Structure probing data (DMS and 2A3) for a 177-nucleotide construct.
DMS adducts were read by reverse transcription with MarathonRT.
[RMDB]
RNA sequence: GGGAACGACUCGAGUAGAGUCGAAAAUGCAGGAGCCGCGCGCGACGUGAAAGCCUUCGGCGAGGAGUUGUUCAUAGGCGGUGACUGCGCUGCCGCGGGAUAUGCCUAGUUGGGUGCUCAGUGCUCGUAACAACAGACAAUUCGUUGUCUGUUGUUAAAAAGAAACAACAACAACAAC
Reactivity to DMS in 0.01 (KOAc 150mM, MgCl2 10mM, bicine 150mM(pH8.5), 24C), signal-to-noise 8, nucleotides 027 to 126: u010g020c020a030g010g010a270g010c010c020g010c040g020c100g030c080g010a090c090g000u010g010a070a080a110g000c090c020u000u000c060g020g030c110g020a140g010g000a080g020u000u000g010u000u000c040a080u000a110g010g010c010g000g010u000g000a190c030u000g010c030g010c070u010g010c030c040g010c060g000g000g000a080u010a070u010g000c030c020u000a080g010u000u000g010g000g010u000g000c050u000c060a060g010u000g000c040u010c060g010
Reactivity to 2A3 in 0.01 (KOAc 150mM, MgCl2 10mM, bicine 150mM(pH8.5), 24C), signal-to-noise 3, nucleotides 027 to 126: u130g000c030a020g000g070a020g020c030c020g000c030g070c020g000c040g100a060c050g020u080g100a090a010a010g040c000c000u110u100c110g050g030c070g010a040g020g000a070g020u100u070g070u110u090c050a070u120a110g140g000c000g040g000u030g020a040c020u020g050c020g000c010u040g000c000c000g030c030g020g050g000a060u100a040u170g040c000c000u060a080g060u130u100g030g000g010u060g010c020u010c070a060g040u050g060c010u010c050g010
For 2A3 the reverse transcriptase was SuperScript II with manganese. It was measured as part of the RMDB library OK2TST.